[RMDB]
RNA sequence: GGGAACGACUCGAGUAGAGUCGAAAAAUACAUUCCUGUGCCGGCAAUACAGUGUGUAUGGAGGUCUCAAUGGCUCGGAAGUGCCAGCAGACCGGCGUAGAUAUUAGCAGACGUAUGGGCGUAAGACAAAAGAGAAUGAUGUUCGCAUCAUUCUCAAGGCGAACCUAUGGUUCGCCAUAGGUUCGCCAAAAGAAACAACAACAACAAC
Reactivity to 2A3 in 0.01 (KOAc 150mM, MgCl2 10mM, bicine 150mM(pH8.5), 24C), signal-to-noise 1, nucleotides 027 to 156: a000u180a030c040a000u030u080c000c010u010g020u040g010c010c070g010g020c020a020a080u070a160c050a070g070u030g010u000g000u090a050u040g090g030a000g030g000u000c000u000c080a050a180u060g000g000c020u010c070g050g100a220a020g050u020g020c000c000a000g090c000a000g030a020c000c010g000g030c020g110u020a020g050a110u060a080u170u110a030g080c050a010g010a050c050g030u010a020u100g040g000g040c030g000u150a050a000g050a070c020a010a020a040a000g000a010g000a000a000u020g000a000u000g000u050u020c240g000c000a000u000c000a000u000u000c000u000c000a000a000
Reactivity to DMS in 0.01 (KOAc 150mM, MgCl2 10mM, bicine 150mM(pH8.5), 24C), signal-to-noise 1, nucleotides 027 to 156: a060u020a090c030a110u000u010c270c010u000g020u010g030c000c040g010g000c050a070a090u000a020c050a080g020u010g030u000g070u000a050u010g030g020a150g020g000u020c030u010c120a130a160u010g000g040c050u000c030g000g000a240a110g060u000g000c010c020a110g010c030a080g040a000c000c000g000g040c020g000u000a030g010a110u000a050u010u000a070g020c030a120g000a030c090g010u000a040u000g010g000g000c030g010u000a040a130g050a220c050a030a070a150a120g000a020g010a020a010u000g000a010u000g000u010u030c260g010c010a040u010c020a040u000u030c000u000c000a030a040
Chemical mapping of a 207-nucleotide RNA with 2A3 and DMS. Conditions: 150 mM KOAc, 10 mM MgCl2 and 150 mM bicine (pH 8.5), 24 C. It was measured as part of the RMDB library M2RFPK. For 2A3 the reverse transcriptase was SuperScript II with manganese. Values cover nucleotides 27 to 156.